[RMDB]
Source information
This 207-nucleotide RNA was probed chemically with DMS and 2A3. The DMS profile rests on 1,329 reads. Reactivities are given for positions 27 through 156. The 2A3 profile rests on 1,577 reads. For 2A3 the reverse transcriptase was SuperScript II with manganese.
RNA sequence: GGGAACGACUCGAGUAGAGUCGAAAAACAGAAAAAAGGAGUUUAAAUUAGAUUUGCAAACGGACGGUACUAAAUACCGUCACUUUUACGUCUAACUUAUCGUUAACUCUGCAAAAAGAGAACAAGAAAAACAAGCGUGAGUUCGCUCACGCUUGAACUACUGUACCGAGUUCGCUCGGUACAGUAGAAAAGAAACAACAACAACAAC
Reactivity to DMS in 0.01 (KOAc 150mM, MgCl2 10mM, bicine 150mM(pH8.5), 24C), signal-to-noise 1, nucleotides 027 to 156: a140c040a260g000a000a040a100a060a150a150g040g000a060g020u020u000u020a040a000a070u000u000a000g000a020u000u000u040g130c020a000a000a020c140g050g000a000c000g060g000u000a010c000u050a080a030a300u000a000c000c000g000u020c030a060c030u000u010u000u000a000c010g020u000c000u000a020a000c010u010u000a020u000c050g000u000u000a020a030c080u000c000u010g020c170a110a020a180a110a000g000a150g010a090a060c030a080a100g000a070a120a080a140a060c050a050a040g010c000g030u000g000a030g020u000u020c300g000c000u000c000a000c000g000c000u000u000g020a000a140
Reactivity to 2A3 in 0.01 (KOAc 150mM, MgCl2 10mM, bicine 150mM(pH8.5), 24C), signal-to-noise 2, nucleotides 027 to 156: a010c020a000g130a030a120a010a020a020a030g070g020a040g000u080u100u080a030a090a060u050u030a030g010a020u030u110u250g040c050a040a020a000c030g020g000a000c000g000g000u010a030c020u230a080a080a080u040a010c000c010g040u000c000a050c000u010u000u000u020a030c010g000u000c010u020a030a040c020u060u050a050u150c010g090u010u030a010a020c000u000c010u050g010c060a030a040a050a090a020g060a020g050a050a010c080a170a030g130a060a120a030a010a030c000a000a000g000c000g000u000g000a010g000u060u090c240g020c110u000c000a000c010g000c000u010u000g000a000a000